[RMDB]
RNA sequence: GGGAACGACUCGAGUAGAGUCGAAAAGGGGGGGUCACUAGGAACACUGGGGUCCAGUGGAUCCGUGGGACUACCCUCUCCACCCUCCCAACACACUCCUUCCCCCCUGCGGGGCUUCCCCAUAAGAUUAGGCCUCAGUUCGCUGAGGCCAAAAGAAACAACAACAACAAC
Reactivity to DMS in 0.01 (KOAc 150mM, MgCl2 10mM, bicine 150mM(pH8.5), 24C), signal-to-noise 4, nucleotides 027 to 129: g040g010g020g010g040g000g000u020c040a060c000u020a300g020g030a030a190c020a030c030u000g000g000g110g050u060c010c000a000g000u030g000g000a150u040c000c020g020u030g020g000g000a050c050u060a240c100c010c000u000c010u030c000c000a160c000c060c010u030c000c000c000a160a130c180a110c000a100c010u030c020c100u000u010c000c000c000c000c000c000u040g040c050g020g010g050g000c050u000u000c010c040c010c130a150u040a100a160g010a050u100u090a000
Reactivity to 2A3 in 0.01 (KOAc 150mM, MgCl2 10mM, bicine 150mM(pH8.5), 24C), signal-to-noise 4, nucleotides 027 to 129: g000g000g000g000g000g000g000u040c020a030c040u060a040g000g040a000a020c000a000c000u000g000g020g070g130u130c040c000a010g000u050g000g030a140u000c000c000g020u120g000g000g000a010c000u300a300c020c000c000u000c000u000c010c000a070c000c000c010u010c000c030c000a040a000c060a000c000a010c060u100c000c000u040u060c000c000c000c000c000c000u070g010c030g010g000g000g000c010u040u000c010c020c000c000a050u100a100a060g030a050u010u250a050